Source: RMDB library OK3TST, as collected in RNAgym. This 207-nucleotide RNA was probed chemically with 2A3. Values cover nucleotides 27 to 156.

RNA sequence: GGGAACGACUCGAGUAGAGUCGAAAAACACCGGCUCUAGGGAUUCGGGCCGUCCCAUGCCCCUCCUGAGCGGCCACGAACCGGUGCGGAUCUCUACGGCCUCCGAACGCAGGGACCCUGUGCCCGGGAGUGCUGAGGUGGUAGUAGCGCUGCCGGUAGCUGUUGCAUAAUUCGUUAUGCAACAGCUAAAAGAAACAACAACAACAAC
Reactivity to 2A3 in 0.01 (KOAc 150mM, MgCl2 10mM, bicine 150mM(pH8.5), 24C), signal-to-noise 2, nucleotides 027 to 156: a010c050a060c020c040g070g000c000u000c000u120a110g030g140g040a220u110u120c030g020g000g000c010c020g040u000c010c010c000a010u080g060c020c000c000c000u110c070c060u120g030a030g080c040g010g000c010c010a100c120g030a060a020c020c050g000g020u010g010c030g000g010a130u040c010u000c000u040a020c010g130g000c010c000u000c010c060g020a050a000c020g000c070a080g000g050g000a010c100c050c070u200g110u300g120c000c000c030g030g050g000a060g030u090g000c060u030g020a020g040g000u090g040g000u000a040g010u020a010g060c010g000c040u080g050c010c000g000g000u000

The RNA was probed in 150 mM KOAc, 10 mM MgCl2 and 150 mM bicine (pH 8.5) at 24 C.